Overview:
Structure probing data (DMS and 2A3) for a 177-nucleotide construct. 2A3 adducts were read by reverse transcription with SuperScript II with manganese. Reactivities are rounded to 0.1 and cut off at 0 and 3. DMS adducts were read by reverse transcription with MarathonRT. The reactions ran in a buffer of 150 mM KOAc, 10 mM MgCl2 and 150 mM bicine (pH 8.5), at 24 C.
[RMDB]
RNA sequence: GGGAACGACUCGAGUAGAGUCGAAAAUCUAUUUUCUACUUAUCAACAGCCAUUUACUAAAAGGUGGAUUCUUGUUGCCAAUACAGAAAUAGGGCACUGGCUACGUAGAGAACUUACUAAUGCUACGGAAACGAGACAGAUUCGUCUGUCUCGUUUCAAAAGAAACAACAACAACAAC
Reactivity to DMS in 0.01 (KOAc 150mM, MgCl2 10mM, bicine 150mM(pH8.5), 24C), signal-to-noise 1, nucleotides 027 to 126: u040c050u020a040u000u010u000u000c020u000a060c060u010u010a120u000c000a080a080c070a060g020c000c010a000u020u020u020a080c080u030a140a050a050a080g010g060u000g010g020a240u010u000c110u000u000g000u000u050g020c090c080a010a070u000a110c170a080g000a020a030a000u000a000g010g020g000c050a060c110u020g010g020c090u020a080c090g010u020a050g040a080g010a080a060c160u020u000a090c110u020a110a030u000g000c030u010a110c160g030
Reactivity to 2A3 in 0.01 (KOAc 150mM, MgCl2 10mM, bicine 150mM(pH8.5), 24C), signal-to-noise 1, nucleotides 027 to 126: u030c010u000a030u050u100u070u000c010u070a060c070u030u070a060u150c020a020a040c010a020g030c040c000a040u150u090u120a200c160u150a060a110a100a060g010g010u000g000g060a070u150u070c050u090u170g020u000u030g000c000c000a090a040u060a160c030a030g020a060a080a070u020a020g000g010g000c000a010c120u020g130g000c050u100a020c010g000u030a020g080a010g010a080a000c020u010u090a050c010u160a000a160u090g050c080u040a050c000g070